[RMDB]
RNA sequence: GGGAACGACUCGAGUAGAGUCGAAAAGUGGUGCUGCCCAGCGGCGAAGUGACUUCCAACGGCAACUUCCACGGCGCACCGGUAGCCUACGUGCUGGACUUCCUUGCCAUCGCCGUGGCCGACCUCGCCAUUAAGUGCUCUUCGGAGCACUUAAUGGAAAAGAAACAACAACAACAAC
Reactivity to 2A3 in 0.01 (KOAc 150mM, MgCl2 10mM, bicine 150mM(pH8.5), 24C), signal-to-noise 3, nucleotides 027 to 126: g120u090g010g020u060g020c060u090g050c030c010c040a050g040c030g050g010c050g010a020a010g030u050g100a090c030u110u050c090c040a070a060c030g030g000c030a070a060c030u080u070c020c010a030c030g010g010c020g000c010a050c170c000g000g000u020a000g020c000c010u050a080c040g090u190g080c020u040g000g040a150c040u080u020c020c000u020u090g030c010c020a060u070c030g000c010c010g000u010g040g000c000c000g040a090c010c010u020c060g000
Reactivity to DMS in 0.01 (KOAc 150mM, MgCl2 10mM, bicine 150mM(pH8.5), 24C), signal-to-noise 4, nucleotides 027 to 126: g020u010g000g030u000g010c030u010g030c030c020c090a160g030c090g010g010c150g000a030a030g010u000g010a150c070u000u010c090c200a070a110c160g000g020c130a110a030c050u000u000c040c040a050c070g000g010c000g010c130a060c070c040g010g020u000a040g000c040c010u000a070c170g000u020g010c070u010g010g000a090c090u000u000c040c030u000u000g030c050c020a060u000c050g010c030c020g020u000g010g020c070c030g000a070c030c040u010c110g000